[RMDB]
RNA sequence: GGGAACGACUCGAGUAGAGUCGAAAAAGCACUGGUACGAUACGUCUUACCAGUGCAGUCGUUGGGAUGGAACGCAAUUAAAUACAUGUGUGACGUGUAUUUGCGAACGACGUAAUUAUUUUUCAAAAUCACGCUAUCGUGUUCGCACGAUAGCGAAGGUGUUAUCCAGGUUCGCCUGGAUAACACCAAAAGAAACAACAACAACAAC
Reactivity to 2A3 in 0.01 (KOAc 150mM, MgCl2 10mM, bicine 150mM(pH8.5), 24C), signal-to-noise 3, nucleotides 027 to 156: a000g000c000a000c000u000g020g000u010a010c030g010a020u000a010c210g080u000c000u010u000a010c000c010a000g010u000g000c010a000g040u000c000g000u010u080g090g050g080a130u150g110g120a190a070c010g000c020a020a020u210u150a150a110a000u010a010c000a030u050g110u040g100u170g200a100c040g000u010g010u010a000u000u030u050g000c000g010a020a010c030g000a000c020g010u010a000a070u080u080a090u030u050u050u020u050c060a050a080a080a080u220c090a000c100g000c000u020a010u000c000g000u030g030u070u060c170g040c070a000c000g000a000u000a000g020c020g000a010a020